[RMDB]
RNA sequence: GGGAACGACUCGAGUAGAGUCGAAAAGAUAUGGAGUGAUCAGGUGGGAGAAUAGGUGAUCGGAAACGAUCACACAUUCGAAGAACACCUGAGUCACUCCUAAGUCAAACUGACCUUCGGGUCAGAAGAUCACUCUUAAGUUCGCUUAAGAGUGAUCAAAAGAAACAACAACAACAAC
Reactivity to 2A3 in 0.01 (KOAc 150mM, MgCl2 10mM, bicine 150mM(pH8.5), 24C), signal-to-noise 5, nucleotides 027 to 126: g030a010u060a040u180g000g000a010g000u010g000a020u020c010a010g020g010u010g020g020g000a080g020a020a020u070a080g050g040u010g000a000u000c010g020g000a100a080a020c010g010a010u010c000a000c000a010c000a010u010u010c020g120a300a020g030a020a010c000a010c010c000u010g010a000g000u020c000a000c000u000c000c010u000a010a000g000u000c010a020a070a120c000u000g000a010c010c000u050u070c300g140g000g000u010c010a010g010a020a040
Reactivity to DMS in 0.01 (KOAc 150mM, MgCl2 10mM, bicine 150mM(pH8.5), 24C), signal-to-noise 6, nucleotides 027 to 126: g000a070u000a300u010g000g010a010g030u000g010a080u000c000a010g000g010u010g010g010g000a110g000a010a010u000a080g010g000u000g000a010u000c000g020g000a140a100a270c010g010a010u000c000a000c000a010c020a010u000u000c000g000a130a130g000a140a260c010a000c000c000u000g000a030g010u000c000a010c000u000c000c000u000a010a060g000u000c020a110a140a270c000u000g000a010c000c000u000u020c230g030g010g000u000c000a010g000a080a120